This 177-nucleotide RNA was probed chemically with DMS and 2A3. It was measured as part of the RMDB library OK2TRN. Reactivities are rounded to 0.1 and cut off at 0 and 3.
RNA sequence: GGGAACGACUCGAGUAGAGUCGAAAAAUUCGAUGUUGAUGUUUUUUCCCAGAUGUGCCAAUCUUUGGAAGUUGACCCAAUGACGGCAGCGAAGGUUAUAGUCGCGGUCAUGAGCAAUGAGAGCGGAGGGAUUAAUUUUAUUCGUAAAAUUAAUCCCAAAAGAAACAACAACAACAAC
Reactivity to DMS in 0.01 (KOAc 150mM, MgCl2 10mM, bicine 150mM(pH8.5), 24C), signal-to-noise 4, nucleotides 027 to 126: a110u010u000c080g000a120u000g000u000u000g020a080u010g010u000u000u000u000u000u000c020c010c020a120g000a110u010g010u000g000c010c020a080a140u000c040u000u000u000g000g010a090a160g000u010u000g000a140c070c020c030a060a030u000g000a040c050g020g020c020a040g000c020g010a040a080g010g000u000u010a100u000a170g020u000c020g000c010g000g000u000c030a020u010g000a070g000c050a040a030u000g010a050g000a120g010c150g020g010a170
Reactivity to 2A3 in 0.01 (KOAc 150mM, MgCl2 10mM, bicine 150mM(pH8.5), 24C), signal-to-noise 1, nucleotides 027 to 126: a000u150u110c020g010a060u230g040u130u080g010a000u030g070u060u050u100u000u050u050c010c000c000a000g050a060u200g040u090g020c000c000a050a070u060c090u060u090u160g060g040a070a030g060u160u110g180a300c000c080c000a010a010u000g000a030c010g160g040c080a060g010c040g000a010a050g150g040u180u300a230u110a290g040u060c020g000c020g040g000u000c000a010u000g000a000g000c030a040a100u170g030a030g000a000g040c100g040g010a060